[RMDB]
RNA sequence: GGGAACGACUCGAGUAGAGUCGAAAACGGCACUGCUUCGGCAGUGCCGAAAUCUUCGCCAAAUGUAUAGCAUAAAGCAGGCGGAAGUGCAGUUAGAAUAAGAAAGUAACACCUUCGGGUGUUACAACUAUAUUAACAAGUUCGCUUGUUAAUAUAGAAAAGAAACAACAACAACAAC
Reactivity to DMS in 0.01 (KOAc 150mM, MgCl2 10mM, bicine 150mM(pH8.5), 24C), signal-to-noise 6, nucleotides 027 to 126: c030g010g010c010a020c000u000g020c020u000u000c170g020g020c000a020g040u000g010c000c010g000a010a040a050u010c050u000u000c040g020c010c020a080a120a120u010g010u000a080u010a130g010c040a110u010a080a090a150g020c040a090g000g010c030g010g010a020a050g000u000g000c090a080g000u000u000a060g000a090a080u010a070a120g000a110a110a100g000u000a010a000c000a010c000c000u000u010c220g020g020g010u000g000u000u000a000c000a030a140
Reactivity to 2A3 in 0.01 (KOAc 150mM, MgCl2 10mM, bicine 150mM(pH8.5), 24C), signal-to-noise 4, nucleotides 027 to 126: c000g000g040c020a000c010u010g070c020u090u090c140g080g030c040a040g000u000g020c000c000g010a000a000a000u030c000u030u050c010g010c010c000a060a110a050u100g060u050a180u190a200g060c070a060u190a210a200a050g040c050a040g040g020c030g030g000a050a020g040u070g060c040a050g020u140u210a060g120a190a110u170a180a040g120a120a090a000g000u000a010a000c000a000c000c000u020u100c240g050g020g000u000g000u000u000a000c000a000a000